[RMDB]
RNA sequence: GGGAACGACUCGAGUAGAGUCGAAAAUACCGCAGGCCUGCGGUGCGGCAGUGCGGAGACCUGCCGUAAGCCGUGUUGUUUUGACAACCGGGAGAAAGCGUAUGCGGAGGCAGCGCUUUCAGGGUCUAAAAGUAUGGGAUCUUCGGAUCCCAUACAACCACUACGGAUAGUUCGCUAUCCGUAGUGGAAAAGAAACAACAACAACAAC
Reactivity to 2A3 in 0.01 (KOAc 150mM, MgCl2 10mM, bicine 150mM(pH8.5), 24C), signal-to-noise 2, nucleotides 027 to 156: u050a000c000c000g020c000a010g000g030c010c040u020g000c000g000g000u000g010c000g000g000c000a010g030u090g170c090g140g010a050g030a160c000c000u010g000c000c000g010u000a010a000g020c030c000g110u140g000u170u000g000u000u080u130u300g100a000c000a000a010c000c000g010g000g000a020g000a000a000a000g000c000g000u040a300u230g020c030g040g090a040g300g000c000a000g000c000g000c000u000u000u000c000a000g000g010g000u000c010u020a040a070a020a040g000u000a000u000g010g010g000a000u010c030u020u050c170g030g000a000u020c010c010c000a000u000a000c000a000a000

The record gives the reactivity of an RNA of 207 nucleotides to 2A3. Source: RMDB library M2RFPK, as collected in RNAgym. 2A3 adducts were read by reverse transcription with SuperScript II with manganese. The reactions ran in a buffer of 150 mM KOAc, 10 mM MgCl2 and 150 mM bicine (pH 8.5), at 24 C. Values are in units of 0.01, from 0 to 300, in steps of 10.